RNA sequence: GGGAACGACUCGAGUAGAGUCGAAAAGAUAUGGAGACCCAGGAGACAUGAUCCUUGCAUCGGAAACGAUGUACAUGAGGAUCAACAGCUCCGGGUCUCCUAAGUCAAAGCGUCCUUCGGGACGCAAUCAUGUUCACUCCUUCGGGAGUGAACAUGAAAAAGAAACAACAACAACAAC
Reactivity to DMS in 0.01 (KOAc 150mM, MgCl2 10mM, bicine 150mM(pH8.5), 24C), signal-to-noise 1, nucleotides 027 to 126: g010a000u010a300u000g040g000a010g000a000c010c010c010a130g020g010a000g020a070c010a300u020g010a030u000c000c030u000u000g020c010a010u000c000g000g020a040a090a220c000g010a010u000g000u000a080c300a230u020g010a000g020g020a050u000c000a070a040c140a220g010c000u000c000c000g000g000g010u000c000u010c000c000u000a000a040g000u000c050a160a090a150g010c000g020u000c000c000u020u010c300g000g030g030a000c000g000c000a000a010